Annotation
The record gives the reactivity of an RNA of 177 nucleotides to 2A3 and DMS. For 2A3 the reverse transcriptase was SuperScript II with manganese.
RNA sequence: GGGAACGACUCGAGUAGAGUCGAAAAGCUCAAGCCUUCGUCACUCCAAACGUUUCGGCGAGAAGCAGGCCAUUAUCGCCGGCAUGGCGGCCGACGCGCUGGGCUGGCGUUCGCGACGCGAGGCUGGUAUAGCAUCGCGGUUCGCCGCGAUGCUAUAAAAAGAAACAACAACAACAAC
Reactivity to 2A3 in 0.01 (KOAc 150mM, MgCl2 10mM, bicine 150mM(pH8.5), 24C), signal-to-noise 2, nucleotides 027 to 126: g000c000u010c070a050a040g000c010c010u010u030c010g010u020c020a030c060u030c020c050a090a070a090c040g020u020u080u120c030g000g000c060g040a070g010a050a010g030c040a040g060g010c030c020a070u190u140a090u210c060g000c000c040g020g040c130a180u100g090g000c000g050g030c030c020g070a040c060g000c000g000c000u030g000g070g000c030u010g020g000c020g010u010u060c080g010c040g030a060c020g030c050g020a010g000g000c000u020g050g000
Reactivity to DMS in 0.01 (KOAc 150mM, MgCl2 10mM, bicine 150mM(pH8.5), 24C), signal-to-noise 4, nucleotides 027 to 126: g020c020u000c030a130a100g020c020c020u000u000c010g010u010c010a060c070u010c090c070a040a070a100c070g010u000u000u010c050g010g000c030g020a100g000a110a090g010c040a090g030g010c030c100a110u000u020a110u000c160g000c010c000g030g030c080a050u010g000g010c100g010g000c030c010g000a050c070g000c050g020c070u000g010g000g030c090u000g010g010c040g010u000u010c070g010c060g000a090c120g010c140g010a040g000g020c000u000g010g020
Reactivities are given for positions 27 through 126.
The RNA was probed in 150 mM KOAc, 10 mM MgCl2 and 150 mM bicine (pH 8.5) at 24 C.
DMS adducts were read by reverse transcription with MarathonRT.